The record gives the reactivity of an RNA of 177 nucleotides to DMS. The reactions ran in a buffer of 150 mM KOAc, 10 mM MgCl2 and 150 mM bicine (pH 8.5), at 24 C.

[RMDB]
RNA sequence: GGGAACGACUCGAGUAGAGUCGAAAAACUCAAUCCGUUGACAUGUUAGCUGUCAAAACAGGCGUUGCUAUUGAACAGCUGCUUUAUGCGAUCCAACAACUGUAUACUGGGUUCCAGGGAAAGCAAACGAAAAGACUAGGUUCGCCUAGUCUUUUCGAAAAGAAACAACAACAACAAC
Reactivity to DMS in 0.01 (KOAc 150mM, MgCl2 10mM, bicine 150mM(pH8.5), 24C), signal-to-noise 2, nucleotides 027 to 126: a070c020u010c090a090a150u030c040c080g010u000u000g070a140c080a050u010g020u000u000a060g020c030u020g030u000c010a020a030a060a030c170a030g000g070c120g050u010u020g040c050u000a110u010u000g010a050a020c050a040g000c010u000g000c030u010u000u000a100u020g020c040g020a070u040c070c030a040a040c020a070a060c050u000g040u000a120u000a110c150u000g010g000g020u000u000c050c000a090g040g000g000a020a050a160g000c160a050a130a140